[RMDB]
RNA sequence: GGGAACGACUCGAGUAGAGUCGAAAAAAGGCAUGUGAGCUUCCACUCGGUGAAGAGCGUCAGCGGACGGCCUCUGAGACGAGCGAUGGACAGUAGAGCUCGUCUCUACCAGUCGCGUGCUGACUCUCACGCCCACCCGCACGGCUGCUCCGAGGGACAGAUUACAAAUGUUCGCAUUUGUAAUCUGAAAAGAAACAACAACAACAAC
Reactivity to DMS in 0.01 (KOAc 150mM, MgCl2 10mM, bicine 150mM(pH8.5), 24C), signal-to-noise 3, nucleotides 027 to 156: a100a040g010g030c030a100u000g020u010g010a090g020c030u000u000c020c030a110c040u000c020g030g020u010g010a160a080g000a040g010c040g000u000c090a140g020c010g030g020a040c040g020g020c030c040u020c030u000g010a090g020a030c020g010a030g030c000g020a300u000g010g020a150c110a120g030u010a030g010a300g030c040u000c120g000u020c000u000c000u000a000c050c080a110g040u010c020g000c000g020u000g000c080u000g020a030c080u020c020u010c000a070c070g010c030c010c020a150c010c000c010g050c070a080c050g020g020c020u000g000c030u000c030c030g020a080g010g000g000a300
Reactivity to 2A3 in 0.01 (KOAc 150mM, MgCl2 10mM, bicine 150mM(pH8.5), 24C), signal-to-noise 9, nucleotides 027 to 156: a000a000g120g000c110a090u180g060u090g130a040g020c020u050u000c020c010a300c050u030c020g010g010u070g070a170a140g010a060g040c030g020u030c040a010g000c020g060g060a130c010g010g000c000c020u060c100u030g000a000g000a000c000g000a010g000c010g050a090u150g080g070a070c080a110g150u180a040g030a010g010c010u020c090g040u030c010u010c000u000a020c010c020a020g000u000c010g010c050g090u170g010c030u000g000a010c000u000c000u000c010a020c060g000c000c000c010a080c010c020c010g050c040a060c140g040g000c030u090g010c010u020c010c000g000a010g000g000g000a010
This 207-nucleotide RNA was probed chemically with DMS and 2A3. Values cover nucleotides 27 to 156. It was measured as part of the RMDB library VIROID. DMS adducts were read by reverse transcription with MarathonRT.